[RMDB]
RNA sequence: GGGAACGACUCGAGUAGAGUCGAAAACAGGAGUACAUCUUGCACAACUAUUGACGGCAGGCACCGUACAUUUUAAUCCUGGACCACAUUGACAUUUUCGUGGUUUAUCCGGUCCACAUGAUUGUGUCUCUACCAUAUUGCUUAAACAAGUAACACACACCGGAAAAAUGUUCGCAUUUUUCCGGUGAAAAGAAACAACAACAACAAC
Reactivity to DMS in 0.01 (KOAc 150mM, MgCl2 10mM, bicine 150mM(pH8.5), 24C), signal-to-noise 1, nucleotides 027 to 156: c010a040g020g010a130g020u000a030c090a120u000c050u000u000g100c050a190c010a110a180c050u000a100u010u040g010a130c100g020g040c030a100g000g030c090a030c000c090g000u000a080c110a090u000u000u010u000a000a170u000c050c040u000g010g000a140c050c020a050c080a030u000u010g010a050c010a110u000u000u000u000c110g030u000g000g020u010u010u000a060u010c040c010g020g020u000c000c060a000c020a050u030g020a070u010u010g000u020g000u000c000u000c000u010a060c000c020a080u000a150u000u000g000c020u000u000a060a100a070c090a090a140g000u000a060a050c030a140c150a170
Reactivity to 2A3 in 0.01 (KOAc 150mM, MgCl2 10mM, bicine 150mM(pH8.5), 24C), signal-to-noise 4, nucleotides 027 to 156: c010a000g010g010a010g030u060a020c010a070u030c030u050u050g000c070a040c030a190a160c090u220a160u120u200g060a030c040g040g000c030a030g020g000c100a040c070c040g010u040a030c010a070u100u120u090u230a080a110u060c000c010u000g040g000a020c020c000a020c020a060u050u120g060a040c040a050u090u120u080u080c070g020u050g030g000u000u010u050a100u060c040c050g030g040u000c020c010a030c010a050u170g010a060u050u040g020u010g010u020c010u010c010u090a080c040c030a070u070a080u140u160g060c060u090u130a020a050a020c040a070a040g090u120a170a010c050a010c000a000
The record gives the reactivity of an RNA of 207 nucleotides to DMS and 2A3. The RNA was probed in 150 mM KOAc, 10 mM MgCl2 and 150 mM bicine (pH 8.5) at 24 C. High DMS reactivity at an A or C suggests that its Watson-Crick edge is free.